[RMDB]
RNA sequence: GGGAACGACUCGAGUAGAGUCGAAAAACUACCGCUUGAUUGUAGAACUGCUUAGUGGUGUUCAGAAUGGGCUUUAAUUCAGAUGCCAGUAAGCAACCUUAUAGAGCCUGUCCUUUGGGAGGGAUUGAUGUAGGUCAAGUUUCGACUUGACCUACAUAAAAGAAACAACAACAACAAC
Reactivity to 2A3 in 0.01 (KOAc 150mM, MgCl2 10mM, bicine 150mM(pH8.5), 24C), signal-to-noise 3, nucleotides 027 to 126: a020c040u020a030c010c010g030c030u060u120g110a290u030u170g030u040a010g010a120a070c050u020g000c010u010u030a050g090u110g040g000u050g060u010u030c030a050g040a020a010u050g070g080g030c050u260u190u220a060a010u020u030c010a010g000a010u020g000c000c000a110g080u000a010a000g000c010a010a030c000c010u100u070a110u080a160g100a000g080c010c020u130g120u100c040c010u080u070u170g090g050g000a030g000g000g010a010u010u110g060
Reactivity to DMS in 0.01 (KOAc 150mM, MgCl2 10mM, bicine 150mM(pH8.5), 24C), signal-to-noise 4, nucleotides 027 to 126: a120c050u010a080c060c080g040c120u020u000g010a140u010u000g010u010a030g000a150a140c130u000g000c000u000u000a030g000u000g000g010u000g010u000u000c050a150g000a010a010u010g000g030g020c270u000u010u010a090a040u000u000c000a120g020a040u000g000c020c010a030g000u000a010a020g000c000a030a070c060c020u000u000a100u000a120g000a100g000c020c040u010g020u000c010c010u000u000u000g020g020g000a300g000g000g000a080u000u020g010